[RMDB]
RNA sequence: GGGAACGACUCGAGUAGAGUCGAAAAAAGAGUUUCUCUGUUCUCUAAAAUAAAAACAGAGUGGUGGAGUCAUUAUGACCCUCUUAGAGUUUCCAGUCUCUCUAAAAAACUGGUGGCGAGCCUGCUCAAAAUCAUUAGACCUUCGGGUCUAAUGAAACCCUAUGUUUAUGUUCGCAUAAACAUAGGGAAAAGAAACAACAACAACAAC
Reactivity to 2A3 in 0.01 (KOAc 150mM, MgCl2 10mM, bicine 150mM(pH8.5), 24C), signal-to-noise 2, nucleotides 027 to 156: a020a010g000a000g000u000u000u000c000u000c000u000g000u020u000c000u000c010u030a080a190a240a220u110a030a010a070a030a000c000a010g000a000g000u020g000g010u030g000g040a260g010u010c020a060u040u300a060u300g050a010c000c000c000u030c030u050u150a020g000a000g000u010u020u000c000c000a010g020u000c010u000c000u030c040u100a150a080a000a000a000a030c010u000g030g000u020g030g000c010g000a020g040c000c110u090g000c030u070c130a070a090a050a090u010c000a010u000u000a000g000a010c000c010u010u030c210g070g030g000u000c000u000a000a000u000g000a000a000a000

Structure probing data (2A3) for a 207-nucleotide construct. 2A3 adducts were read by reverse transcription with SuperScript II with manganese. The reactions ran in a buffer of 150 mM KOAc, 10 mM MgCl2 and 150 mM bicine (pH 8.5), at 24 C. The 2A3 profile rests on 1,257 reads. Reactivities are rounded to 0.1 and cut off at 0 and 3.